Annotation
The data come from the RNA Mapping Database (RMDB), library OK2TST. Structure probing data (2A3 and DMS) for a 177-nucleotide construct. The RNA was probed in 150 mM KOAc, 10 mM MgCl2 and 150 mM bicine (pH 8.5) at 24 C. 2A3 is a SHAPE reagent: it acylates the 2'-hydroxyl of flexible nucleotides of all four kinds. For 2A3 the reverse transcriptase was SuperScript II with manganese.
RNA sequence: GGGAACGACUCGAGUAGAGUCGAAAAGCACAUGCAGAUCGGCCUGUCCAUUCAGCACGAUGCCUCUCAUGGUGCCAUCAGCAAAAAGCCCUGGGUCAACGCUCUCUUUGCCUACGGCAUCGACGUCGGAUCGGGGACAAUUCGUUGUCCCCGAUCCAAAAGAAACAACAACAACAAC
Reactivity to 2A3 in 0.01 (KOAc 150mM, MgCl2 10mM, bicine 150mM(pH8.5), 24C), signal-to-noise 1, nucleotides 027 to 126: g000c000a020c030a040u090g020c020a000g000a100u160c070g070g000c000c070u050g050u050c050c000a060u050u060c040a010g000c010a020c040g030a040u050g030c000c000u020c000u020c020a060u150g060g000u040g050c050c000a020u050c030a030g060c010a020a000a020a110a080g020c000c000c020u050g070g000g000u060c050a060a010c040g030c030u040c000u000c000u090u080u080g010c000c010u070a070c060g000g000c010a020u040c030g070a040c030g070u170c070
Reactivity to DMS in 0.01 (KOAc 150mM, MgCl2 10mM, bicine 150mM(pH8.5), 24C), signal-to-noise 1, nucleotides 027 to 126: g000c010a010c090a000u000g010c010a050g000a070u010c150g000g010c030c020u010g000u000c010c110a100u010u000c100a110g030c030a060c050g030a080u010g000c060c060u000c100u020c050a110u000g020g020u000g000c010c040a050u000c160a020g020c070a050a070a050a120a070g000c000c010c030u010g010g030g030u000c040a020a130c110g010c060u010c060u000c010u000u000u000g010c010c030u000a140c100g000g020c030a020u000c000g000a000c300g000u000c080